[RMDB]
RNA sequence: GGGAACGACUCGAGUAGAGUCGAAAAGGGAAAAAAAGGGAAAACAGCCCAGGAAGCCCCCACUGGCCGGCGCCCAUGCCAGCUCUCUUCUGGCCAGGACGCAGCUGCUGCGCACUUCGCGCGGGGGAUGCGAGGUUUAUUUCGAUAAACCUCGCAUAAAAGAAACAACAACAACAAC
Reactivity to DMS in 0.01 (KOAc 150mM, MgCl2 10mM, bicine 150mM(pH8.5), 24C), signal-to-noise 3, nucleotides 027 to 126: g000g010g020a000a010a010a070a050a090a060g000g000g010a120a070a070a170c120a140g030c040c030c000a090g010g010a130a130g010c000c010c010c000c030a120c100u020g000g040c030c100g010g010c080g000c020c010c020a100u000g010c000c000a010g000c270u020c100u030c130u000u020c000u000g000g020c000c140a270g000g000a060c020g010c020a120g010c060u020g000c090u010g040c000g020c010a120c160u060u070c140g000c000g030c030g000g000g000g010g000
Reactivity to 2A3 in 0.01 (KOAc 150mM, MgCl2 10mM, bicine 150mM(pH8.5), 24C), signal-to-noise 2, nucleotides 027 to 126: g030g000g050a020a040a010a010a010a100a180g100g010g000a060a130a050a060c020a030g040c000c000c000a000g010g070a030a020g020c000c000c000c000c030a070c060u060g000g010c020c030g050g020c000g020c000c000c000a020u110g000c000c010a020g010c020u040c020u050c010u270u030c010u000g000g020c000c010a050g000g000a000c020g000c030a030g070c010u060g000c030u070g000c020g000c010a050c140u240u150c190g000c000g000c000g010g000g010g000g000
Conditions: 150 mM KOAc, 10 mM MgCl2 and 150 mM bicine (pH 8.5), 24 C. The record gives the reactivity of an RNA of 177 nucleotides to DMS and 2A3. For DMS the reverse transcriptase was MarathonRT. 2A3 adducts were read by reverse transcription with SuperScript II with manganese.